[RMDB]
RNA sequence: GGGAACGACUCGAGUAGAGUCGAAAAUGAGCGAAUCUUUGGACCAACGAAAGACUGGGAAUGUGCCUGUGGGAAGUACAAGAGAAUUCGUUAUAAAGGCAUUGUUUGUGAUCGCUGUGGCGUUGAACUAUCGUGAAAAUUUCGAUUUUCACGAUAGAAAAGAAACAACAACAACAAC
Reactivity to DMS in 0.01 (KOAc 150mM, MgCl2 10mM, bicine 150mM(pH8.5), 24C), signal-to-noise 9, nucleotides 027 to 126: u010g010a080g020c040g010a070a060u000c030u000u000u010g010g020a110c040c040a100a160c080g010a110a080a060g010a080c060u000g000g010g010a110a100u010g010u000g000c050c010u000g020u010g010g000g010a060a100g010u000a050c090a060a070g010a080g000a070a100u000u000c060g010u000u000a090u010a050a080a070g010g000c050a050u000u000g010u000u000u010g010u010g010a050u010c060g000c040u000g020u000g010g020c080g000u000u000g000a070a150
Reactivity to 2A3 in 0.01 (KOAc 150mM, MgCl2 10mM, bicine 150mM(pH8.5), 24C), signal-to-noise 5, nucleotides 027 to 126: u130g020a010g010c040g030a050a050u040c050u050u040u090g020g030a040c020c020a040a050c060g060a110a040a050g060a050c050u060g020g030g090a080a130u080g010u050g040c010c020u030g010u090g040g030g000a030a020g040u040a040c020a100a010g020a010g040a200a080u060u050c030g020u050u030a110u070a130a100a020g020g000c030a020u010u060g070u050u080u100g050u050g030a040u060c040g010c050u020g070u060g080g000c040g010u020u010g010a020a020